The record gives the reactivity of an RNA of 207 nucleotides to DMS and 2A3. For DMS the reverse transcriptase was MarathonRT. The DMS profile rests on 3,357 reads.
RNA sequence: GGGAACGACUCGAGUAGAGUCGAAAACGCCGUUUACUUCCAGGUAAGCGCGAUCGCCUUCUUUCAUGCUUUCCAUCCUUCAAUAAACAUGCUGUUAGAUUCAAGCGUCAACGUAACGCCAGCCAGUGAAGAUGGAACCAGACGCCCACCCGGAACGAUAACGAAUGAACUUCGGUUCAUUCGUUAUAAAAGAAACAACAACAACAAC
Reactivity to DMS in 0.01 (KOAc 150mM, MgCl2 10mM, bicine 150mM(pH8.5), 24C), signal-to-noise 2, nucleotides 027 to 156: c040g000c060c030g030u000u000u000a090c030u000u000c070c110a190g020g040u000a040a050g020c020g050c030g020a160u000c050g030c050c040u000u000c030u000u000u010c050a080u000g000c040u000u000u030c010c030a060u000c070c010u000u000c040a070a120u010a100a100a140c060a150u010g010c010u000g030u000u000a120g010a150u000u000c120a070a100g010c030g010u010c030a080a120c090g000u000a110a060c010g030c010c000a210g030c030c030a100g040u000g000a060a060g000a050u010g020g010a070a030c080c000a090g000a140c060g000c050c000c020a070c020c020c000g010g020a120a080c120g000
Reactivity to 2A3 in 0.01 (KOAc 150mM, MgCl2 10mM, bicine 150mM(pH8.5), 24C), signal-to-noise 5, nucleotides 027 to 156: c040g060c070c000g010u000u020u020a030c020u220u140c050c040a040g010g090u010a020a010g020c000g010c040g050a100u070c070g070c030c000u080u030c030u060u170u090c060a120u140g070c060u010u070u000c000c000a020u020c010c080u040u030c040a060a170u160a250a170a080c070a080u130g010c010u020g050u110u110a100g030a250u190u180c130a120a050g000c000g010u030c040a140a150c160g110u200a070a000c000g010c000c000a000g000c010c030a050g020u060g020a020a030g020a020u010g000g020a010a000c010c010a040g020a070c050g000c010c000c020a050c010c040c000g020g010a050a060c030g010